[RMDB]
RNA sequence: GGGAACGACUCGAGUAGAGUCGAAAAGAGAUGCUAGGAGUCGGGAGAGGUCAGAACGACUGGGAAAGAAAAGAGAGCAACGGGGCUAGCUGCCGGGUGUUCCACCUACGGGAACGGUGCCGAGUGACGGCAUCUAUAAGUUCGCUUAUAGAUGCCGAAAAGAAACAACAACAACAAC
Reactivity to DMS in 0.01 (KOAc 150mM, MgCl2 10mM, bicine 150mM(pH8.5), 24C), signal-to-noise 1, nucleotides 027 to 126: g010a080g040a080u010g020c040u000a070g040g010a100g020u000c060g020g030g010a060g020a110g000g010u000c040a060g000a090a160c180g000a080c090u000g010g000g000a050a040a150g010a060a050a070a030g000a080g010a070g010c010a040a060c150g000g010g010g010c020u000a100g040c040u000g000c060c020g010g010g040u000g000u020u000c040c030a060c100c080u010a030c140g020g010g020a070a050c050g010g000u000g000c000c010g000a090g000u000g000a150

The record gives the reactivity of an RNA of 177 nucleotides to DMS.
Values cover nucleotides 27 to 126.
The reactions ran in a buffer of 150 mM KOAc, 10 mM MgCl2 and 150 mM bicine (pH 8.5), at 24 C.
The data come from the RNA Mapping Database (RMDB), library 15KREP.
For DMS, 998 sequencing reads were counted.